Source: RMDB libraries RFM100 and RFMREP, as collected in RNAgym. Chemical mapping of a 177-nucleotide RNA with DMS and 2A3.

RNA sequence: GGGAACGACUCGAGUAGAGUCGAAAAGGGAACCGAAUCGUUUCCAGUGUCUAUAAUCCGUGGUAUAUUUCAUUGGCGAGUGUGUGCGUGCGUGUGCUGUGGCAGCGGCUUUUUUGGCUGCGCUCGGCCAAUGGCGUAUUUUCGAAUACGCCAUUGGAAAAGAAACAACAACAACAAC
Reactivity to DMS in 0.01 (KOAc 150mM, MgCl2 10mM, bicine 150mM(pH8.5), 24C), signal-to-noise 5, nucleotides 027 to 126: g020g010g010a120a090c050c020g010a050a070u010c040g000u000u000u000c000c010a110g020u020g010u000c050u010a070u010a070a060u010c040c030g020u010g010g030u000a080u010a060u020u010u010c030a070u010u010g020g010c080g000a060g010u010g010u010g000u020g010c050g030u010g000c060g030u010g010u020g000c040u000g010u020g000g010c030a070g040c030g020g010c020u000u000u010u010u020u030g010g010c000u000g010c030g000c020u010c040g010g000
Reactivity to 2A3 in 0.01 (KOAc 150mM, MgCl2 10mM, bicine 150mM(pH8.5), 24C), signal-to-noise 8, nucleotides 027 to 126: g060g000g020a020a010c020c010g020a030a060u060c020g010u000u040u000c010c000a020g040u040g040u080c040u060a120u080a120a090u050c030c020g060u040g040g040u060a100u020a060u150u130u080c080a100u050u130g040g000c030g020a070g030u070g010u010g010u030g030c030g020u020g010c030g010u110g020u030g020c030u030g010u080g050g010c020a040g010c020g040g000c000u090u060u030u000u120u240g050g000c010u010g010c010g000c020u010c000g030g010
The reactions ran in a buffer of 150 mM KOAc, 10 mM MgCl2 and 150 mM bicine (pH 8.5), at 24 C.